[RMDB]
RNA sequence: GGGAACGACUCGAGUAGAGUCGAAAAAGUGCUUUACUACUUCCUUAUAUUUGUAUCUAGUUGCUAAAGCGUAAGUCCACAAAAGAUCGACAUUAUAUCAAAAAGAUGUUGGUUUAACUCAGGAAGCAAUUCAACAGAAGUUCGCUUCUGUUGAAUUAAAAGAAACAACAACAACAAC
Reactivity to DMS in 0.01 (KOAc 150mM, MgCl2 10mM, bicine 150mM(pH8.5), 24C), signal-to-noise 5, nucleotides 027 to 126: a110g010u000g010c030u000u000u000a040c030u000a070c030u000u000c040c020u000u000a130u010a130u010u000u010g020u010a040u020c030u010a050g020u000u000g010c200u000a010a020a020g000c020g010u000a080a120g000u000c020c000a100c160a080a070a120a050g000a000u000c000g010a010c000a010u000u000a060u010a260u030c190a070a050a080a140a190g000a000u000g000u010u000g000g010u000u000u000a050a070c110u000c140a070g000g000a060a050g010c250
Reactivity to 2A3 in 0.01 (KOAc 150mM, MgCl2 10mM, bicine 150mM(pH8.5), 24C), signal-to-noise 3, nucleotides 027 to 126: a000g110u070g000c000u010u030u010a020c020u000a000c000u040u040c010c000u130u030a160u030a040u180u170u110g020u000a030u020c050u040a020g010u050u060g050c050u050a010a020a000g000c020g030u020a080a010g060u020c010c010a070c000a070a120a020a010g030a000u010c000g000a010c010a000u030u090a110u050a020u220c080a030a110a000a000a060g010a010u010g010u000u000g030g030u020u010u050a040a050c030u030c050a010g130g030a040a010g070c020
The record gives the reactivity of an RNA of 177 nucleotides to DMS and 2A3. 2A3 adducts were read by reverse transcription with SuperScript II with manganese. The RNA was probed in 150 mM KOAc, 10 mM MgCl2 and 150 mM bicine (pH 8.5) at 24 C. For DMS the reverse transcriptase was MarathonRT. Reactivities are given for positions 27 through 126.